This 207-nucleotide RNA was probed chemically with 2A3 and DMS. High DMS reactivity at an A or C suggests that its Watson-Crick edge is free. DMS adducts were read by reverse transcription with MarathonRT. It was measured as part of the RMDB library RNAMAK. For 2A3 the reverse transcriptase was SuperScript II with manganese.
RNA sequence: GGGAACGACUCGAGUAGAGUCGAAAAGGACUGUUCGCAGUCCCGUUUUUCCUAAGUCUGCAGACGCUCACGAAGAACCAGAGGACAUCGGAAACGAUGUCCGACGAAGGGGAGUGAGCGCCUGCAGAUAUGGAUUUUAAAGACCUUCGGGUCUUAAGUAGAGUACCUAAUUCGUUAGGUACUCUACAAAAGAAACAACAACAACAAC
Reactivity to 2A3 in 0.01 (KOAc 150mM, MgCl2 10mM, bicine 150mM(pH8.5), 24C), signal-to-noise 4, nucleotides 027 to 156: g010g010a000c010u020g040u120u150c270g020c180a010g000u020c000c020c020g030u060u050u040u080u040c010c000u040a120a030g020u020c000u000g010c010a000g010a000c000g000c000u000c000a090c010g220a300a090g000a040a020c000c000a000g000a000g010g010a000c000a000u010c000g010g040a070a060a070c000g000a000u000g000u000c000c010g030a010c000g010a020a010g000g000g010g000a020g000u000g000a010g000c010g000c000c000u000g010c000a000g000a000u000a000u000g000g000a000u020u120u120u270a160a130a000g020a000c030c000u050u110c290g080g000g000u000c020u020u050a070a010
Reactivity to DMS in 0.01 (KOAc 150mM, MgCl2 10mM, bicine 150mM(pH8.5), 24C), signal-to-noise 2, nucleotides 027 to 156: g000g000a000c000u000g040u000u000c290g040c010a030g000u000c000c000c030g020u000u000u000u000u000c000c010u000a070a300g010u000c000u060g000c010a010g010a010c000g010c000u000c000a030c010g000a190a140g000a170a160c010c020a100g010a300g010g010a010c030a010u010c000g010g000a230a070a300c000g020a020u000g020u010c000c000g020a060c070g030a220a090g010g000g000g030a240g010u000g000a000g000c000g000c000c000u000g020c000a010g010a000u000a040u010g000g000a130u000u000u020u010a070a130a060g010a030c000c000u000u010c220g030g040g030u000c000u000u010a010a170